[RMDB]
Source information:
The record gives the reactivity of an RNA of 177 nucleotides to DMS and 2A3. Source: RMDB library OK2TST, as collected in RNAgym.
RNA sequence: GGGAACGACUCGAGUAGAGUCGAAAACACUCGCCGUACAGUGCUGGCGGACCAUCACCGUUGGCUAAGAUACCCAAGUCUGGCACCUCACCCACGCCGGUGGCACCCAACUCCUGGGCAGCACUGCGUAAUUAACACAGUUCGCUGUGUUAAUUACAAAAGAAACAACAACAACAAC
Reactivity to DMS in 0.01 (KOAc 150mM, MgCl2 10mM, bicine 150mM(pH8.5), 24C), signal-to-noise 9, nucleotides 027 to 126: c110a120c090u000c080g020c030c060g000u010a100c070a050g010u000g020c020u000g010g020c040g000g000a090c070c070a040u010c060a080c060c040g010u000u000g010g010c040u010a080a090g010a100u000a080c030c020c030a090a110g000u000c040u000g000g010c040a060c040c040u000c070a090c050c020c030a070c090g010c060c050g000g000u000g000g000c080a140c030c010c010a050a120c090u000c070c060u000g010g000g010c040a050g010c040a050c030u000g020c210
Reactivity to 2A3 in 0.01 (KOAc 150mM, MgCl2 10mM, bicine 150mM(pH8.5), 24C), signal-to-noise 8, nucleotides 027 to 126: c050a020c020u060c040g030c020c020g080u120a070c030a060g040u020g050c010u030g020g010c080g080g030a260c030c020a090u070c020a010c020c020g030u040u070g030g000c020u070a110a030g030a110u150a110c000c020c000a030a020g060u020c040u040g030g000c020a060c010c010u040c020a050c010c020c000a040c050g060c050c020g040g010u030g030g000c020a060c000c010c000a030a060c030u080c040c040u020g010g020g010c010a020g010c010a020c010u030g030c030